The record gives the reactivity of an RNA of 177 nucleotides to DMS and 2A3. In probing experiments dimethyl sulfate is read out at A N1 and C N3, which are open when not base-paired. Conditions: 150 mM KOAc, 10 mM MgCl2 and 150 mM bicine (pH 8.5), 24 C. The data come from the RNA Mapping Database (RMDB), library TTRINS. The DMS profile rests on 4,413 reads.
[RMDB]
RNA sequence: GGGAACGACUCGAGUAGAGUCGAAAAGAUAUGGACGAUUCAGCUAUAGACAGCAGACUGGUGGAGGGAAUCGGAAACGAUUCCUCCCCACCCACCAGUCUGCCGAAGCUUAUUUCGUCCUAAGUCAGUAAUAGUAGGUGUUCGCACCUACUAUUACAAAAGAAACAACAACAACAAC
Reactivity to DMS in 0.01 (KOAc 150mM, MgCl2 10mM, bicine 150mM(pH8.5), 24C), signal-to-noise 5, nucleotides 027 to 126: g000a040u010a190u000g010g010a010c000g020a040u000u000c300a060g000c010u020a200u000a230g020a220c300a120g010c000a000g000a020c000u000g000g010u000g020g000a150g020g000g010a010a000u000c010g010g020a060a030a140c010g010a030u000u000c010c010u000c060c020c010c030a300c110c010c010a010c000c000a010g000u000c000u000g010c000c030g000a070a050g010c000u000u010a120u000u000u000c010g010u010c000c010u000a000a110g000u000c020a130
Reactivity to 2A3 in 0.01 (KOAc 150mM, MgCl2 10mM, bicine 150mM(pH8.5), 24C), signal-to-noise 4, nucleotides 027 to 126: g020a000u060a030u130g010g010a010c010g010a010u010u060c090a020g000c010u050a110u220a300g300a300c140a040g010c010a000g000a000c000u000g000g000u010g010g020a010g000g000g020a000a010u000c000g010g030a000a030a000c000g000a000u000u020c010c000u060c000c010c000c000a010c010c010c000a000c000c000a010g000u020c000u000g000c010c000g060a020a000g000c000u030u060a110u220u300u070c000g010u000c010c000u000a050a000g050u020c090a020